The record gives the reactivity of an RNA of 177 nucleotides to DMS. The DMS profile rests on 1,198 reads. It was measured as part of the RMDB library OK2TST. The RNA was probed in 150 mM KOAc, 10 mM MgCl2 and 150 mM bicine (pH 8.5) at 24 C.
RNA sequence: GGGAACGACUCGAGUAGAGUCGAAAAUGUCGGGGAGCGUGCGCAACGUGACGCUGGCGAACUGCACUUUUUUGGACGGAGCGAGCCUGUACGUUGUUGGGUGGCGUUCCGACCCGCCUGCUGGCGAGGUGCGAGUUUUAUUCGUAAAACUCGCACCAAAAGAAACAACAACAACAAC
Reactivity to DMS in 0.01 (KOAc 150mM, MgCl2 10mM, bicine 150mM(pH8.5), 24C), signal-to-noise 1, nucleotides 027 to 126: u010g020u010c030g020g000g000g000a190g000c080g040u000g010c050g000c080a080a090c040g020u000g010a120c050g010c040u010g030g000c000g000a200a100c090u000g000c050a130c070u000u000u010u010u000u000g030g020a170c050g010g000a020g010c030g010a300g030c010c000u010g000u010a060c110g000u010u000g000u010u000g010g010g020u010g010g010c010g000u000u000c060c010g000a090c010c040c030g000c030c000u020g000c140u010g000g010c070g000a030